Structure probing data (2A3) for a 177-nucleotide construct. Source: RMDB library RFM100, as collected in RNAgym. Reactivities are rounded to 0.1 and cut off at 0 and 3. The reactions ran in a buffer of 150 mM KOAc, 10 mM MgCl2 and 150 mM bicine (pH 8.5), at 24 C.
RNA sequence: GGGAACGACUCGAGUAGAGUCGAAAAGAGCAUUUGUUAAAAAAAUUUCGCAUGGUGAAUCCCCCUGUGUGGAGGGGCGACUGGUGAAAAAUCCUUGCUUGUGAUUCAUUAUCGACACGGGUUCGGUCGGAAAUGUUUGAUUCGUCAAACAUUUCCGAAAAGAAACAACAACAACAAC
Reactivity to 2A3 in 0.01 (KOAc 150mM, MgCl2 10mM, bicine 150mM(pH8.5), 24C), signal-to-noise 2, nucleotides 027 to 126: g030a000g000c090a030u140u120u160g100u170u220a100a020a020a000a020a060a100u080u060u030c050g010c020a020u080g020g030u060g050a070a170u070c000c000c010c020c010u040g040u030g030u100g180g010a110g000g020g020g000c010g030a040c060u030g000g000u000g040a060a030a070a060a010u070c010c000u040u060g040c000u080u000g050u040g040a040u010u080c000a070u080u160a050u140c050g010a010c000a000c030g060g000g000u070u070c000g030g020u000